[RMDB]
Source information:
Structure probing data (2A3 and DMS) for a 177-nucleotide construct. The data come from the RNA Mapping Database (RMDB), library OK1LIB. 2A3 adducts were read by reverse transcription with SuperScript II with manganese. The reactions ran in a buffer of 150 mM KOAc, 10 mM MgCl2 and 150 mM bicine (pH 8.5), at 24 C.

RNA sequence: GGGAACGACUCGAGUAGAGUCGAAAAAGGUCGCUGCUCAGCCGUGGCGGUCCGGUCAUCGAUGGGUAGCCUAUCGCCAGCCGGCGCCGUGAUGGUCAAGCCGGUCAUCACCGACGCGCCGAUCGCGUGUAAUUGGCAGUUUCGACUGCCAAUUACAAAAAGAAACAACAACAACAAC
Reactivity to 2A3 in 0.01 (KOAc 150mM, MgCl2 10mM, bicine 150mM(pH8.5), 24C), signal-to-noise 7, nucleotides 027 to 126: a000g080g010u110c040g010c040u030g000c010u040c070a030g050c080c000g040u030g030g000c010g000g060u080c040c040g050g000u070c020a070u100c040g060a040u030g010g010g070u090a050g040c010c010u110a100u100c000g000c050c020a010g020c030c000g000g000c020g000c000c010g000u030g040a020u020g000g020u040c050a070a010g150c100c080g020g000u010c010a010u020c010a010c010c060g070a080c060g000c000g000c030c010g030a070u080c030g010c030g020
Reactivity to DMS in 0.01 (KOAc 150mM, MgCl2 10mM, bicine 150mM(pH8.5), 24C), signal-to-noise 5, nucleotides 027 to 126: a040g000g010u000c250g000c010u010g000c050u020c050a120g020c130c120g020u000g000g030c030g020g010u010c100c050g020g010u000c050a050u020c120g000a080u010g000g000g000u040a060g000c020c060u000a040u020c000g000c070c080a170g010c100c020g000g000c040g010c010c070g000u000g000a010u010g000g000u010c040a100a140g030c210c120g000g000u000c000a020u010c010a050c100c110g030a130c170g020c020g020c020c040g000a040u020c170g020c060g000